[RMDB]
RNA sequence: GGGAACGACUCGAGUAGAGUCGAAAAUAGACAAGACAGUAAUGAAAUUUUAAAAACACCAGAUGCAGCAGACAUUACAUUACCAGGUCGUGCGUAUUUACAAGUUGGUAAUAAUGAAAUUUAUGAAAUCAUUAACACGGUUCGCCGUGUUAAUGAUAAAAGAAACAACAACAACAAC
Reactivity to 2A3 in 0.01 (KOAc 150mM, MgCl2 10mM, bicine 150mM(pH8.5), 24C), signal-to-noise 3, nucleotides 027 to 126: u100a030g070a030c080a090a020g060a050c020a010g050u070a010a110u090g110a140a100a040u120u130u190u250a070a150a040a000a000c050a040c000c020a010g000a130u030g010c000a010g020c000a000g030a030c000a040u020u050a020c010a050u090u000a030c060c020a030g010g020u000c010g000u000g020c020g020u080a070u050u020u130a120c030a100a090g060u030u020g000g000u090a040a050u040a100a030u060g120a160a140a110u270u220u080a210u170g060a000a100
Reactivity to DMS in 0.01 (KOAc 150mM, MgCl2 10mM, bicine 150mM(pH8.5), 24C), signal-to-noise 3, nucleotides 027 to 126: u040a060g000a110c070a030a050g010a120c090a170g020u000a070a050u010g010a060a030a050u020u020u010u020a060a050a110a100a080c160a060c050c060a080g020a060u010g000c010a050g040c050a030g000a080c030a030u030u010a080c050a040u000u040a030c090c080a020g020g000u000c030g040u010g000c130g000u000a030u030u010u010a020c170a100a050g020u010u000g010g040u030a010a020u020a020a110u020g010a020a090a100u000u000u030a060u050g020a090a080